This 207-nucleotide RNA was probed chemically with DMS and 2A3. The RNA was probed in 150 mM KOAc, 10 mM MgCl2 and 150 mM bicine (pH 8.5) at 24 C. It was measured as part of the RMDB library OK3TST. For 2A3 the reverse transcriptase was SuperScript II with manganese. For 2A3, 390 sequencing reads were counted.

RNA sequence: GGGAACGACUCGAGUAGAGUCGAAAAAAUGUAUAUUCUGUUGAUUUGGGGUGGAGACUUCUGUACAUGUCUAUUAGGUCCACUUGGUGCAGAGCUGAGUUCAAUUCCUGGAUAUCCUUGUUAACUUUUUGUCUCGUUGAUCUGUCUAAUGUUGACAAUGCUUAGGUUGAUUCGUCAACCUAAGCAUAAAAGAAACAACAACAACAAC
Reactivity to DMS in 0.01 (KOAc 150mM, MgCl2 10mM, bicine 150mM(pH8.5), 24C), signal-to-noise 1, nucleotides 027 to 156: a080a060u020g010u000a130u010a100u010u000c070u020g020u000u010g010a130u000u020u000g000g060g010g020u000g030g030a110g000a030c010u000u000c060u000g010u010a040c040a060u000g020u000c070u020a170u020u000a080g040g000u010c070c030a040c070u000u000g050g020u000g020c070a060g000a110g040c030u010g000a070g000u000u000c030a080a120u010u000c020c020u020g000g000a110u000a100u000c010c030u030u010g020u000u000a100a060c040u000u000u000u000u010g000u000c020u000c000g050u000u030g010a120u000c040u010g020u000c000u020a110a120u000g020u000u000g030a110c110a110
Reactivity to 2A3 in 0.01 (KOAc 150mM, MgCl2 10mM, bicine 150mM(pH8.5), 24C), signal-to-noise 1, nucleotides 027 to 156: a000a000u180g100u020a130u010a050u090u140c050u020g100u040u030g040a110u090u000u050g050g030g000g000u040g000g020a110g020a060c000u150u180c070u020g060u030a050c020a110u090g070u010c020u120a140u020u060a100g010g000u000c010c010a040c060u030u060g100g000u030g000c020a010g080a000g110c090u020g060a040g080u040u070c080a030a070u030u000c000c010u000g000g000a010u010a030u090c040c030u060u000g050u020u100a100a060c020u160u130u000u030u160g080u050c040u020c060g050u000u010g070a210u050c060u020g060u010c020u010a220a000u170g040u090u010g060a020c020a020